[RMDB]
Chemical mapping of a 207-nucleotide RNA with DMS and 2A3. For 2A3 the reverse transcriptase was SuperScript II with manganese. For DMS the reverse transcriptase was MarathonRT.
RNA sequence: GGGAACGACUCGAGUAGAGUCGAAAAAAGCUUCAACGCCUUUUUUUCCUAUCUUCUUUAGCACCGGGCUAGGGAGUAAGCCCGUGGAACCUUAGUUUUGUUCCCUCGGGACUUACUUGUGGUUCCUGUGGUGCGCUCCUGACCCUGCUGCUUUGAACCAUAAGAGUAAGUUCGCUUACUCUUAUGGAAAAGAAACAACAACAACAAC
Reactivity to DMS in 0.01 (KOAc 150mM, MgCl2 10mM, bicine 150mM(pH8.5), 24C), signal-to-noise 1, nucleotides 027 to 156: a020a000g010c010u000u010c280a100a150c140g000c060c010u000u010u010u010u000u000u000c020c020u010a110u010c070u000u000c010u020u010u000a070g050c030a120c060c080g040g000g000c030u010a130g050g010g010a040g040u000a040a290g000c010c000c000g040u000g020g020a020a000c000c020u000u000a040g010u010u000u000u000g000u000u000c010c000c050u000c220g090g010g010a040c000u000u000a010c030u010u000g010u000g020g010u000u000c010c010u000g030u010g040g000u010g030c190g020c000u000c010c020u000g010a100c110c000c060u000g050c020u000g000c000u000u000u010g000a170a250
Reactivity to 2A3 in 0.01 (KOAc 150mM, MgCl2 10mM, bicine 150mM(pH8.5), 24C), signal-to-noise 6, nucleotides 027 to 156: a000a000g080c100u300u220c160a170a040c090g040c040c020u050u020u030u020u010u050u070c040c010u060a210u090c080u130u010c010u050u130u100a010g000c000a020c030c020g020g020g020c040u060a060g050g020g010a000g000u040a120a040g010c000c000c000g030u020g000g000a000a000c000c000u030u020a020g020u080u120u060u190g090u150u060c020c010c020u090c120g050g010g000a000c000u000u010a000c000u020u040g090u110g100g000u010u010c030c000u060g140u220g020g010u080g000c060g000c000u000c000c000u050g040a090c000c000c010u000g020c020u000g000c000u040u060u110g050a060a070